[RMDB]
RNA sequence: GGGAACGACUCGAGUAGAGUCGAAAAGACCAGAUCCUGCUGGUGCUCGGCGGACUGCUCCUGAUGAUCCUCGUUGGCUGGGUCUUGCCGGAUCUCGCGGUCGACGAACUCUCGCGUGGCAUCGGCGGCGUAUAGGGCGUUUCGACGCCCUAUACGCAAAAGAAACAACAACAACAAC
Reactivity to 2A3 in 0.01 (KOAc 150mM, MgCl2 10mM, bicine 150mM(pH8.5), 24C), signal-to-noise 1, nucleotides 027 to 126: g080a030c010c020a020g050a080u120c020c040u110g000c020u000g010g000u020g030c060u050c010g050g010c000g050g000a010c040u050g080c020u080c030c010u050g070a070u070g000a070u070c000c060u070c080g030u040u080g060g000c030u000g050g020g050u020c000u010u190g020c020c000g050g040a080u060c060u050c080g080c050g020g060u070c000g010a050c010g070a080a150c000u040c040u080c060g010c030g010u010g010g070c000a060u040c030g040g000c020g000
Reactivity to DMS in 0.01 (KOAc 150mM, MgCl2 10mM, bicine 150mM(pH8.5), 24C), signal-to-noise 1, nucleotides 027 to 126: g010a100c100c030a110g010a070u000c040c050u020g030c040u010g010g030u000g000c060u000c110g020g000c040g020g010a060c090u040g010c020u000c100c020u010g000a110u000g000a060u020c080c060u000c070g010u000u000g020g010c120u030g030g010g000u000c000u000u030g000c040c050g000g020a110u000c020u010c110g050c060g020g010u000c040g020a040c110g010a070a110c120u010c010u010c040g020c100g000u000g010g000c070a020u000c000g020g000c040g010

Background
Source: RMDB library OK2TRN, as collected in RNAgym. This 177-nucleotide RNA was probed chemically with 2A3 and DMS. 2A3 adducts were read by reverse transcription with SuperScript II with manganese. The DMS profile rests on 1,265 reads. The reactions ran in a buffer of 150 mM KOAc, 10 mM MgCl2 and 150 mM bicine (pH 8.5), at 24 C.